Chemical mapping of a 177-nucleotide RNA with DMS and 2A3.
Source: RMDB library OK1LIB, as collected in RNAgym.
2A3 is a SHAPE reagent: it acylates the 2'-hydroxyl of flexible nucleotides of all four kinds.
[RMDB]
RNA sequence: GGGAACGACUCGAGUAGAGUCGAAAAAAGUUACGAAUCCACCAAUUGAUGCGUAUCGUGAAAAAAUCGUAACGAGUGAACUUUCUUAUUUAGGUGGCGAAGGUAACUUACUAGCACCUGACGAAACCCGUGUUGUCUUUUUCGAAAGACAACACGGAAAAGAAACAACAACAACAAC
Reactivity to DMS in 0.01 (KOAc 150mM, MgCl2 10mM, bicine 150mM(pH8.5), 24C), signal-to-noise 1, nucleotides 027 to 126: a000a000g000u000u000a010c000g020a230a240u010c100c030a000c050c040a000a000u000u040g000a050u000g000c080g070u050a210u000c020g000u000g020a000a000a080a020a150a090u000c050g020u000a100a010c070g010a010g000u000g050a210a090c260u000u000u000c020u000u000a140u020u020u010a140g000g000u000g000g000c130g000a090a010g000g000u020a050a000c000u000u000a100c140u020a100g000c190a200c000c000u000g000a070c160g020a040a230a050c170
Reactivity to 2A3 in 0.01 (KOAc 150mM, MgCl2 10mM, bicine 150mM(pH8.5), 24C), signal-to-noise 2, nucleotides 027 to 126: a000a000g060u060u020a050c090g070a100a060u010c000c000a010c000c000a060a120u090u090g070a060u030g050c070g100u140a090u180c010g030u020g230a030a030a030a000a000a090u090c130g000u010a000a080c000g000a000g030u160g050a150a100c060u210u090u000c020u000u140a270u240u090u130a000g050g020u000g000g020c030g020a000a030g120g000u000a010a010c030u000u010a000c000u000a000g170c070a130c100c050u150g050a070c080g050a030a030a070c040

The reactions ran in a buffer of 150 mM KOAc, 10 mM MgCl2 and 150 mM bicine (pH 8.5), at 24 C.